[RMDB]
RNA sequence: GGGAACGACUCGAGUAGAGUCGAAAAGGUUUUAGUUGAUUUUGGUGCUUCCAAGCCUUUAGAGACCACAGUUGUGGCUGAAACUGGAACGUCUAUUGGAUCGGCCAAAUUUAUUUCACCAGAGCAACUAUCUCCCACUAUUCGUAGUGGGAGAUAGAAAAGAAACAACAACAACAAC
Reactivity to DMS in 0.01 (KOAc 150mM, MgCl2 10mM, bicine 150mM(pH8.5), 24C), signal-to-noise 4, nucleotides 027 to 126: g010g010u000u000u000u010a070g010u010u000g000a120u000u000u000u000g010g020u000g020c100u010u000c030c050a060a120g010c050c020u000u000u000a090g010a210g000a140c040c060a170c040a140g010u010u000g020u010g010g000c020u010g030a050a060a060c040u000g010g000a080a080c220g000u000c080u000a120u000u000g000g000a110u000c090g000g010c040c040a030a050a090u000u000u010a080u010u010u000c040a040c020c020a050g020a110g000c120a050a180
Reactivity to 2A3 in 0.01 (KOAc 150mM, MgCl2 10mM, bicine 150mM(pH8.5), 24C), signal-to-noise 2, nucleotides 027 to 126: g050g010u050u030u100u160a060g000u020u040g030a150u080u100u090u040g000g030u060g080c050u040u040c000c000a030a040g040c000c010u050u070u080a080g020a030g030a080c010c040a080c040a220g130u150u160g130u190g070g030c030u060g000a110a000a000c020u010g000g020a070a070c100g140u020c040u080a130u060u120g050g020a020u080c030g000g010c000c030a050a010a030u100u160u010a070u000u160u070c020a040c020c030a000g040a030g060c000a020a040

Annotation
Structure probing data (DMS and 2A3) for a 177-nucleotide construct. The reactions ran in a buffer of 150 mM KOAc, 10 mM MgCl2 and 150 mM bicine (pH 8.5), at 24 C. Values are in units of 0.01, from 0 to 300, in steps of 10.